[RMDB]
RNA sequence: GGGAACGACUCGAGUAGAGUCGAAAAAGCUGUCUGCCAUCUUGAUGAGGUCGCGGAAUGCGGCCAGAUGAUGCUGAGGCAGUUCGAUAGCGCCAGAGAUCCAGUCCAGAGCGCCCGUAGCUGCUGCUAGAGCCUGAACCACCUCAGAGCGCUCAGCCCUCCAUAUACAAUUCGUUGUAUAUGGAGGAAAAGAAACAACAACAACAAC
Reactivity to DMS in 0.01 (KOAc 150mM, MgCl2 10mM, bicine 150mM(pH8.5), 24C), signal-to-noise 3, nucleotides 027 to 156: a060g020c020u000g010u000c010u000g010c070c000a040u000c030u000u000g010a200u000g010a110g020g020u000c000g050c000g020g000a180a100u010g030c020g020g010c000c030a060g010a070u000g010a060u000g030c090u010g030a080g010g000c000a040g010u000u000c050g000a190u000a040g010c020g060c010c020a300g010a120g010a100u000c070c090a120g000u000c040c020a030g000a200g000c050g020c000c020c030g010u000a100g000c010u020g020c060u000g020c020u000a060g020a070g020c020c010u000g020a070a070c010c040a060c010c020u000c030a080g010a160g020c020g000c000u000c060a140g000c090
Reactivity to 2A3 in 0.01 (KOAc 150mM, MgCl2 10mM, bicine 150mM(pH8.5), 24C), signal-to-noise 5, nucleotides 027 to 156: a000g010c020u020g010u020c010u030g060c010c010a020u030c020u150u230g090a240u170g090a100g040g000u030c010g000c040g100g290a280a120u300g000c000g000g000c000c000a000g000a010u060g010a020u060g000c060u070g010a040g010g000c010a010g020u030u000c010g050a080u050a110g010c010g000c030c030a010g010a000g010a100u050c080c040a040g060u000c020c010a030g050a050g080c030g010c030c030c020g030u040a030g000c050u080g020c040u050g000c010u090a060g010a020g060c010c020u040g020a070a050c020c010a050c080c010u030c010a010g030a040g030c030g000c020u020c020a030g000c000